This 177-nucleotide RNA was probed chemically with 2A3 and DMS. Reactivities are given for positions 27 through 126. For DMS the reverse transcriptase was MarathonRT.

RNA sequence: GGGAACGACUCGAGUAGAGUCGAAAAUACGACUAAGUGGUGCAUGGCCGUUCACAACAUGUGAGGUGACUUUUAGGUUUAUUGCUGUAAUGUGUGAGACCCUCAGCUACGGCGACUGGGGACUAUAGACGAUAGUGAUGUUCGCAUCACUAUCGUCAAAAGAAACAACAACAACAAC
Reactivity to 2A3 in 0.01 (KOAc 150mM, MgCl2 10mM, bicine 150mM(pH8.5), 24C), signal-to-noise 1, nucleotides 027 to 126: u210a000c000g040a000c020u040a020a110g010u080g060g030u000g050c080a140u090g100g030c000c000g010u030u080c100a090c000a080a090c020a120u080g100u010g020a040g000g030u120g080a140c050u000u000u020u300a010g170g030u010u000u160a210u210u140g040c060u000g020u080a040a240u090g050u070g030u030g110a040g060a120c000c000c000u000c000a010g000c000u190a010c000g130g000c010g000a000c020u020g000g000g000g000a000c000u000a030u130a080
Reactivity to DMS in 0.01 (KOAc 150mM, MgCl2 10mM, bicine 150mM(pH8.5), 24C), signal-to-noise 3, nucleotides 027 to 126: u030a030c160g000a080c060u010a080a100g010u020g000g030u000g030c040a060u010g000g000c010c010g010u020u040c080a050c070a150a100c150a100u010g020u000g040a050g000g010u030g010a040c020u020u020u020u010a040g000g000u010u010u040a050u020u000g020c010u000g010u000a030a100u010g010u000g030u030g000a040g070a120c070c030c010u000c030a030g010c000u020a070c070g010g020c040g050a090c010u000g050g000g010g000a110c080u000a110u020a140